[RMDB]
RNA sequence: GGGAACGACUCGAGUAGAGUCGAAAAUUUGCAAAGUAGCCAAAGUACUUUCUGCUUCACAGAUUGAAUUCAAAAAUGAGCUAGAGGAAAUGUUCAAAUCAGCUGUAAAGCUAUUGAGUGAGAGCAAAUCCCACAGGGCAUUCGUGCCCUGUGGGAUAAAAGAAACAACAACAACAAC
Reactivity to 2A3 in 0.01 (KOAc 150mM, MgCl2 10mM, bicine 150mM(pH8.5), 24C), signal-to-noise 1, nucleotides 027 to 126: u190u180u050g170c190a000a090a000g140u020a120g090c030c040a020a050a000g070u070a000c000u000u000u000c000u060g000c000u300u140c190a190c050a050g120a300u000u000g080a000a300u050u170c030a050a050a050a050a040u300g000a000g000c000u050a080g000a000g070g000a100a030a030u090g000u000u000c000a080a210a170u000c000a000g000c070u000g090u300a090a110a000g000c000u030a100u040u040g000a020g080u050g000a070g000a000g000c000a000a000
Reactivity to DMS in 0.01 (KOAc 150mM, MgCl2 10mM, bicine 150mM(pH8.5), 24C), signal-to-noise 1, nucleotides 027 to 126: u000u000u020g000c150a090a090a000g010u040a100g050c060c090a130a110a120g000u000a040c020u000u000u000c150u000g010c000u020u060c060a060c120a080g000a000u030u060g000a130a110u040u050c300a040a120a000a080a110u030g000a020g000c020u000a110g000a090g000g000a010a130a100u000g000u000u000c010a110a080a200u030c110a040g060c000u010g000u040a060a100a010g000c030u010a070u000u000g000a170g020u030g000a070g000a130g020c050a020a040